Chemical mapping of a 177-nucleotide RNA with DMS. The reactions ran in a buffer of 150 mM KOAc, 10 mM MgCl2 and 150 mM bicine (pH 8.5), at 24 C. The DMS profile rests on 7,131 reads. The data come from the RNA Mapping Database (RMDB), library TTRINS.
[RMDB]
RNA sequence: GGGAACGACUCGAGUAGAGUCGAAAAGAUAUGGACGUGAGAGACAUGCUUUGUGAUUAAACAACUUCACUCGGAAACGAGUGAAGUUGUUUAAUCACGGAAGCAACAGCUCUACACGUCCUAAGUCCUCCUUAUGUAACUUCGGUUACAUAAGGAGAAAAGAAACAACAACAACAAC
Reactivity to DMS in 0.01 (KOAc 150mM, MgCl2 10mM, bicine 150mM(pH8.5), 24C), signal-to-noise 3, nucleotides 027 to 126: g000a130u000a300u010g000g000a010c010g030u000g010a050g000a020g000a050c090a250u000g010c000u000u000u010g010u000g000a020u000u000a000a010a010c000a000a010c000u000u000c010a020c010u000c000g010g000a140a110a220c000g020a020g020u000g000a000a000g010u000u010g000u000u000u000a000a000u000c000a010c000g010g030a000a000g020c000a020a070c300a170g000c000u000c000u000a150c000a000c010g000u000c000c000u000a010a100g010u000c100